[RMDB]
RNA sequence: GGGAACGACUCGAGUAGAGUCGAAAAGACGCCUGUGUGGCGAAACGAGCAAUGGUAUAAGCCGCAAUAGAAGAUGAGAUGGAAGCGGCAAGAUAGAAUGCUCGCAAAGAGAUCCAUCUCACAGAGAGCUAUGGAUUUACUUCGGUAAAUCCAUAGCAAAAGAAACAACAACAACAAC
Reactivity to DMS in 0.01 (KOAc 150mM, MgCl2 10mM, bicine 150mM(pH8.5), 24C), signal-to-noise 3, nucleotides 027 to 126: g000a070c070g000c000c010u000g010u040g000u040g040g040c000g000a030a120a070c060g000a040g010c050a080a060u000g030g030u010a120u040a100a170g020c010c000g010c020a130a140u030a070g000a050a110g000a130u000g020a010g010a030u000g000g020a040a140g030c000g000g000c000a050a020g000a290u010a080g020a110a060u000g010c000u000c010g060c130a080a040a050g020a110g000a140u000c000c020a040u010c000u000c010a010c100a170g010a160g030a150
Reactivity to 2A3 in 0.01 (KOAc 150mM, MgCl2 10mM, bicine 150mM(pH8.5), 24C), signal-to-noise 5, nucleotides 027 to 126: g100a010c010g050c040c010u180g080u090g070u130g200g000c000g030a070a060a020c010g010a000g020c030a100a130u190g110g000u200a100u100a220a010g000c010c000g000c000a020a060u090a160g160a200a010g080a220u040g010a000g000a000u000g020g010a130a050g000c000g010g000c000a010a010g060a020u120a050g120a170a070u060g030c030u020c020g010c030a110a160a010g080a010g000a000u000c000c000a000u000c000u010c000a000c000a000g160a000g010a000
An RNA of 177 nucleotides, treated with DMS and 2A3 and read out base by base. Values cover nucleotides 27 to 126. The 2A3 profile rests on 5,001 reads. Conditions: 150 mM KOAc, 10 mM MgCl2 and 150 mM bicine (pH 8.5), 24 C. It was measured as part of the RMDB library OK1LIB.